[RMDB]
Notes: An RNA of 177 nucleotides, treated with 2A3 and DMS and read out base by base.

RNA sequence: GGGAACGACUCGAGUAGAGUCGAAAACUUUACGACGCCUCCGGCUCGCUGCCCGCACAACCUGGCCAGUUAGUCCCUGCCGUGGGGAUCGAACCCUUCGAUGACACCGACAUCACCGUGCGGCAUGCAGUUGUUACUUGUUCGCAAGUAACAACUGAAAAGAAACAACAACAACAAC
Reactivity to 2A3 in 0.01 (KOAc 150mM, MgCl2 10mM, bicine 150mM(pH8.5), 24C), signal-to-noise 1, nucleotides 027 to 126: c010u100u130u180a080c070g040a000c030g060c000c000u040c030c040g010g010c030u020c020g060c020u030g040c010c020c010g050c010a080c020a050a040c010c020u020g020g000c010c010a000g000u050u070a040g050u060c030c000c010u030g030c020c000g040u090g010g020g000g010a020u050c030g040a060a110c000c010c000u040u050c050g050a060u050g030a030c020a010c070c040g070a060c020a050u060c020a010c020c040g070u060g010c030g000g010c020a020u120g030
Reactivity to DMS in 0.01 (KOAc 150mM, MgCl2 10mM, bicine 150mM(pH8.5), 24C), signal-to-noise 5, nucleotides 027 to 126: c080u000u010u000a090c090g020a100c090g000c040c010u010c080c070g010g020c060u000c040g010c040u000g010c050c030c040g010c060a080c100a060a090c080c030u010g010g020c030c060a110g010u010u000a100g010u000c030c030c020u010g030c030c030g030u010g030g000g010g000a050u000c100g000a070a140c050c030c020u000u000c050g000a090u000g000a100c070a090c060c030g000a090c120a070u000c050a110c060c040g010u010g010c050g000g000c060a080u000g020

Overview:
Reactivities are rounded to 0.1 and cut off at 0 and 3. Conditions: 150 mM KOAc, 10 mM MgCl2 and 150 mM bicine (pH 8.5), 24 C.